[RMDB]
RNA sequence: GGGAACGACUCGAGUAGAGUCGAAAAGUGACUGAGAAACAGUCGCCACGAGCGACGAACCACGGGAGACACUAGCAUGGUGCCGGAAGUAAGACGAUAACGGUGAUCUCGUGUAAGUGUUAGGACGACAAUCAUACAUUUUCGAAUGUAUGAUUGUAAAAGAAACAACAACAACAAC
Reactivity to 2A3 in 0.01 (KOAc 150mM, MgCl2 10mM, bicine 150mM(pH8.5), 24C), signal-to-noise 9, nucleotides 027 to 126: g070u050g020a040c030u040g030a020g080a080a100a010c030a020g000u000c000g000c000c000a190c100g040a080g010c010g010a020c010g010a020a000c010c000a030c010g000g000g010a040g020a020c000a010c010u020a030g040c020a070u060g040g000u020g030c010c000g010g040a060a030g070u150a090a050g120a060c100g040a070u080a170a010c020g000g010u030g040a070u010c060u010c020g010u020g000u020a070a020g010u000g000u030u040a030g030g030a020c030g000
Reactivity to DMS in 0.01 (KOAc 150mM, MgCl2 10mM, bicine 150mM(pH8.5), 24C), signal-to-noise 9, nucleotides 027 to 126: g010u010g000a070c030u000g010a160g010a130a100a130c090a100g000u000c000g000c000c030a110c200g010a160g000c020g010a030c020g010a130a010c150c010a050c040g000g010g000a070g000a090c030a010c010u000a120g010c120a040u010g000g020u010g000c030c010g000g010a090a110g000u030a100a090g010a150c080g010a070u020a070a200c040g000g020u000g010a300u010c000u010c020g010u000g000u010a080a070g000u010g010u010u000a040g000g010a300c270g000